[RMDB]
RNA sequence: GGGAACGACUCGAGUAGAGUCGAAAAUGGAGCCUGGGUCAACUAUUCCGCCACGUCGGGCGCGGGGACCGCUGGGCGGCGCAGAUUGUCCGCGAUCGACUCGACCAUUUCCUCGAUCCACGCAGCGGCAAACCGAAAGCUUCGGCUUUCGGUUUGCAAAAGAAACAACAACAACAAC
Reactivity to 2A3 in 0.01 (KOAc 150mM, MgCl2 10mM, bicine 150mM(pH8.5), 24C), signal-to-noise 2, nucleotides 027 to 126: u070g070g000a050g050c030c080u110g030g000g000u000c030a090a030c070u080a170u290u070c040c000g030c020c000a120c070g140u090c000g050g050g000c030g000c000g030g010g020g000a020c000c010g060c050u060g000g050g050c080g030g000c050g000c020a040g020a130u030u170g080u070c010c040g110c010g000a050u050c010g030a030c040u050c060g070a070c010c000a040u000u000u030c010c000u000c000g010a070u000c010c000a070c070g010c010a040g010c000g060
This 177-nucleotide RNA was probed chemically with 2A3. Reactivities are given for positions 27 through 126. The RNA was probed in 150 mM KOAc, 10 mM MgCl2 and 150 mM bicine (pH 8.5) at 24 C. For 2A3 the reverse transcriptase was SuperScript II with manganese.